[RMDB]
RNA sequence: GGGAACGACUCGAGUAGAGUCGAAAAGAGCAGGCCGGGUGGCUCCCGUAACAGCCGCUAAAACAGCUCCCGAAGCUGAACUCGCUCUCGCUGCCUAAUUAAACGGCAGCGCGUCCCCGGUAGGUUUGCGGGUGGCCUACCGGAGGGCGUCAGAGACCACAUAAGAGGCGUUCGCGCCUCUUAUGUGAAAAGAAACAACAACAACAAC
Reactivity to 2A3 in 0.01 (KOAc 150mM, MgCl2 10mM, bicine 150mM(pH8.5), 24C), signal-to-noise 1, nucleotides 027 to 156: g060a020g000c030a020g000g070c010c010g010g000g030u000g020g000c060u300c080c000c020g060u080a020a020c000a020g030c080c010g010c050u030a020a020a020a120c030a010g010c010u030c000c080c100g070a110a040g000c040u040g020a050a040c020u040c180g020c030u010c000u010c050g000c010u000g010c000c000u100a210a220u260u130a100a160a030c040g000g000c000a000g020c000g030c000g000u000c000c000c000c010g030g020u000a000g050g000u000u020u190g010c020g000g020g000u020g000g000c000c020u000a010c000c000g000g000a030g000g000g000c000g000u000c000a000g000a000g020a030c020